[RMDB]
RNA sequence: GGGAACGACUCGAGUAGAGUCGAAAACUUGCAGCUGAUCAGGGUCGGCCGCUCGGCAUCGGAGCGUGCGCUGUCGAUGGCUUUGGUGAUGGCAUCGGGAUCAUGGCCGUCUGCCUCCAAUACCUGCGUGUCAUCCUACAUUCGUGUAGGAUGACACAAAAGAAACAACAACAACAAC
Reactivity to DMS in 0.01 (KOAc 150mM, MgCl2 10mM, bicine 150mM(pH8.5), 24C), signal-to-noise 2, nucleotides 027 to 126: c050u010u020g010c050a070g010c010u000g000a100u010c070a060g010g020g020u000c030g000g020c030c020g000c020u000c070g000g020c100a050u000c080g010g000a060g020c040g020u010g020c110g000c040u010g000u000c050g000a050u000g010g010c100u000u010u000g020g010u020g010a060u000g010g020c030a060u010c030g000g000g000a080u000c080a110u000g000g000c000c040g030u000c070u000g010c010c010u000c030c030a080a080u000a110c060c020u010g010c260
Reactivity to 2A3 in 0.01 (KOAc 150mM, MgCl2 10mM, bicine 150mM(pH8.5), 24C), signal-to-noise 3, nucleotides 027 to 126: c010u000u080g000c040a050g020c010u040g030a070u110c010a010g020g000g080u030c030g070g020c030c020g040c040u030c000g090g000c040a080u030c040g100g040a070g050c050g050u160g050c100g010c030u060g100u070c020g020a040u050g050g060c000u100u090u100g080g000u110g030a100u090g020g030c010a050u050c050g060g030g010a020u150c060a120u100g050g030c000c010g020u030c040u050g020c000c000u040c000c000a050a030u060a100c010c010u050g000c060

Background
Conditions: 150 mM KOAc, 10 mM MgCl2 and 150 mM bicine (pH 8.5), 24 C. An RNA of 177 nucleotides, treated with DMS and 2A3 and read out base by base. Values cover nucleotides 27 to 126. It was measured as part of the RMDB library OK2TST. For DMS the reverse transcriptase was MarathonRT. For 2A3 the reverse transcriptase was SuperScript II with manganese.